RNA sequence: GGGAACGACUCGAGUAGAGUCGAAAAAGUGAUCCGGUGGUUCCGCAUGGAAGGGCCAUCGCUCAAAGGAUAAAAGGUACUCCGGGGAUAACAGGCUGAUCCCUCCCAAGAGCUCACAUCGACGGAGAUUGCUAAGCAGGUUCGCCUGCUUAGCAAUAAAAGAAACAACAACAACAAC
Reactivity to DMS in 0.01 (KOAc 150mM, MgCl2 10mM, bicine 150mM(pH8.5), 24C), signal-to-noise 3, nucleotides 027 to 126: a130g020u010g010a030u010c080c010g020g010u000g020g000u020u000c030c000g000c200a180u040g040g020a160a090g010g000g020c030c000a010u000c000g000c200u020c080a080a160a070g000g000a050u050a030a050a120a070g020g050u020a140c010u010c020c020g020g000g000g030a020u010a100a050c100a080g000g030c040u020g000a020u020c020c010c040u000c040c040c000a060a130g020a040g000c010u000c110a050c140a110u010c050g000a160c140g050g000a060g010
Reactivity to 2A3 in 0.01 (KOAc 150mM, MgCl2 10mM, bicine 150mM(pH8.5), 24C), signal-to-noise 3, nucleotides 027 to 126: a000g120u090g050a070u090c050c000g010g010u000g000g080u240u300c020c000g010c100a060u150g140g090a040a090g100g000g010c000c010a050u000c010g060c020u000c030a050a050a000g100g000a010u110a150a090a030a000g050g010u030a030c000u000c000c000g030g000g060g020a010u030a150a040c020a060g110g000c000u030g010a060u040c020c010c010u060c010c030c000a090a020g070a000g020c040u080c000a060c010a050u050c040g070a040c030g030g050a020g000